[RMDB]
RNA sequence: GGGAACGACUCGAGUAGAGUCGAAAAGGAAAUAAACGGCACCUAUAAGGUGGUGCCGAACCAGCGUGACCUACCAACACGCAACGAGCAGUCUGGUAUGACUGCAAAGGUAUGGAAAACAAAAAAACUAGAAGAUACUCUUCGGAGUAUCUUCUAGAAAAGAAACAACAACAACAAC
Reactivity to 2A3 in 0.01 (KOAc 150mM, MgCl2 10mM, bicine 150mM(pH8.5), 24C), signal-to-noise 2, nucleotides 027 to 126: g040g020a070a020a090u220a070a180a020c010g010g000c000a000c000c030u080a080u080a300a100g230g050u110g000g000u000g020c000c010g000a000a010c000c000a000g010c000g010u020g030a100c000c020u010a010c000c010a020a020c010a000c000g000c070a020a040c030g040a030g000c000a000g000u020c000u130g120g100u300a150u180g010a000c000u010g000c010a010a020a020g000g000u060a050u240g060g010a100a050a030a020c070a030a100a000a030a010a000a040
Reactivity to DMS in 0.01 (KOAc 150mM, MgCl2 10mM, bicine 150mM(pH8.5), 24C), signal-to-noise 2, nucleotides 027 to 126: g000g040a150a060a090u010a040a100a170c020g000g000c000a000c000c000u000a120u000a110a160g000g020u010g000g050u000g000c000c000g010a020a010c040c080a130g000c000g010u000g020a040c010c010u030a010c000c000a240a120c040a010c010g010c000a080a170c160g010a300g000c000a000g010u000c000u000g050g070u020a040u030g000a010c000u010g010c000a050a040a130g000g020u010a040u040g010g020a100a040a020a030c080a000a070a120a060a040a000a050